[RMDB]
RNA sequence: GGGAACGACUCGAGUAGAGUCGAAAACGGAAGGUGUAACAAGGUAUGUACGUCUUGGUUCUGAGCUGGCUGACGGCAAGGUGUUUGCGUUGCUUGCCGGUCCUGACGAUUGGUAUUUCUAUCACGUCCACGAAGACGGGGAUUUUGCAACACGAACGAACGAGUCUGUUUUCGAACAGACUCGUUCAAAAGAAACAACAACAACAAC
Reactivity to 2A3 in 0.01 (KOAc 150mM, MgCl2 10mM, bicine 150mM(pH8.5), 24C), signal-to-noise 2, nucleotides 027 to 156: c050g000g000a010a010g010g040u100g000u220a110a090c060a110a040g070g030u080a040u170g140u130a000c030g040u030c040u050u080g040g000u100u030c040u120g060a040g050c000u000g100g000c080u060g030a060c000g000g000c020a030a050g050g010u070g010u060u180u140g070c100g030u040u020g050c020u000u000g030c020c020g000g020u000c030c010u060g020a040c020g100a080u050u070g020g000u080a120u080u180u000c050u000a010u020c010a060c040g000u000c030c070a030c130g120a070a020g000a110c040g000g000g020g030a020u080u020u000u210g010c020a000a030c040a000c100g100a070a010c060

About this RNA
This 207-nucleotide RNA was probed chemically with 2A3. The reactions ran in a buffer of 150 mM KOAc, 10 mM MgCl2 and 150 mM bicine (pH 8.5), at 24 C. It was measured as part of the RMDB library OK3TST.